[RMDB]
RNA sequence: GGGAACGACUCGAGUAGAGUCGAAAACGCGCUGCUGGCGGCGGCCGCGCUGGCACUGACCGCAUGCGCGGGCAGCGACGACAAGGGCGAACCCGACGACGGCGGGGACCGGGGCGCAUCCUUGGCCGGAAAGCGCAUGGUUCGCCAUGCGCUUUCCAAAAGAAACAACAACAACAAC
Reactivity to 2A3 in 0.01 (KOAc 150mM, MgCl2 10mM, bicine 150mM(pH8.5), 24C), signal-to-noise 1, nucleotides 027 to 126: c000g050c000g000c000u080g050c000u100g060g040c030g040g040c000g000g000c000c010g020c000g060c040u080g000g050c070a100c180u120g070a110c010c000g020c080a110u220g020c060g000c000g070g060g000c000a040g000c000g150a110c000g030a010c080a090a060g060g000g000c000g030a010a110c000c010c000g040a080c040g000a000c030g060g080c020g040g010g000g000a030c040c010g000g000g000g040c010g000c020a060u080c010c060u010u020g010g000c010c010
This 177-nucleotide RNA was probed chemically with 2A3. 2A3 adducts were read by reverse transcription with SuperScript II with manganese. The RNA was probed in 150 mM KOAc, 10 mM MgCl2 and 150 mM bicine (pH 8.5) at 24 C. For 2A3, 760 sequencing reads were counted.